[RMDB]
RNA sequence: GGGAACGACUCGAGUAGAGUCGAAAACGCUGGGCUUUGAGAACGAGCCUUACUGGGAGCGUGUACUGGACUGAAGCGCGCACGGUCCAGUACACGCAUCGAUCAGUUGGGCUCGACAAAGCCUGUGCUGAAGCGCGCACGGCAACCGAAAGGUGCGGCUGCUUUUAUAGUUCGCUAUAAAAGCAGCAAAAGAAACAACAACAACAAC
Reactivity to 2A3 in 0.01 (KOAc 150mM, MgCl2 10mM, bicine 150mM(pH8.5), 24C), signal-to-noise 2, nucleotides 027 to 156: c060g000c030u090g020g010g000c020u030u040u000g090a150g080a300a150c060g000a000g000c000c000u010u010a000c000u000g020g000g020a050g010c000g010u000g000u000a000c000u000g020g000a010c000u010g020a190a020g000c020g000c010g000c030a020c010g000g000u000c000c000a010g000u000a000c000a000c000g000c010a000u000c000g000a020u020c000a000g000u010u010g000g000g000c000u000c010g030a010c000a000a000a000g000c000c000u000g000u030g000c040u100g040a100a020g010c010g010c010g000c010a000c030g100g030c040a130a170c010c030g030a070a040a040g000g010u020g010c020g030
Reactivity to DMS in 0.01 (KOAc 150mM, MgCl2 10mM, bicine 150mM(pH8.5), 24C), signal-to-noise 1, nucleotides 027 to 156: c040g030c020u000g030g000g010c020u000u010u000g000a130g010a220a190c040g000a090g020c020c000u000u010a010c020u000g020g000g010a050g060c010g050u000g070u000a050c050u000g040g000a010c020u000g020a020a110g030c010g020c010g010c030a300c030g000g000u000c030c000a020g000u000a000c020a020c030g010c020a000u000c170g010a020u000c010a030g000u000u000g000g000g030c020u030c030g000a110c000a010a020a030g030c000c010u000g040u000g030c030u000g010a140a090g020c020g000c010g050c010a020c040g020g030c020a090a300c000c010g010a120a150a250g030g030u010g020c060g020